Source: RMDB library ARCHII, as collected in RNAgym.
This 207-nucleotide RNA was probed chemically with 2A3.
Values cover nucleotides 27 to 156.
For 2A3 the reverse transcriptase was SuperScript II with manganese.
For 2A3, 987 sequencing reads were counted.
RNA sequence: GGGAACGACUCGAGUAGAGUCGAAAAGCCAUCGCCCGCGUGGCGUUCGAGGGGCUCAUAUGAAGCGGGCUACGCCCAAAUCCGCCGCCUGAGGAUGAGGGAAGAGAUGAACCAGGCUAGCCGCCGGGAGGCCUGUCGGUAGGCGGAACGGACGGCGCGUCGCUAAAGAGUUCGCUCUUUAGCGACGAAAAGAAACAACAACAACAAC
Reactivity to 2A3 in 0.01 (KOAc 150mM, MgCl2 10mM, bicine 150mM(pH8.5), 24C), signal-to-noise 1, nucleotides 027 to 156: g030c000c000a010u000c080g020c000c000c000g000c010g000u000g030g030c070g010u090u050c070g060a140g000g000g020g050c030u010c150a120u210a120u250g160a100a020g000c000g000g000g000c000u040a030c010g010c000c000c000a020a010a000u020c010c010g000c020c000g050c000c000u000g010a000g020g010a020u010g000a070g000g030g010a000a000g000a000g040a020u190g050a010a020c050c000a000g000g000c000u020a010g010c020c010g000c000c000g030g000g010a000g000g080c030c010u170g100u190c130g100g130u110a010g000g000c000g000g000a040a000c000g010g050a100c000g000g000c000g000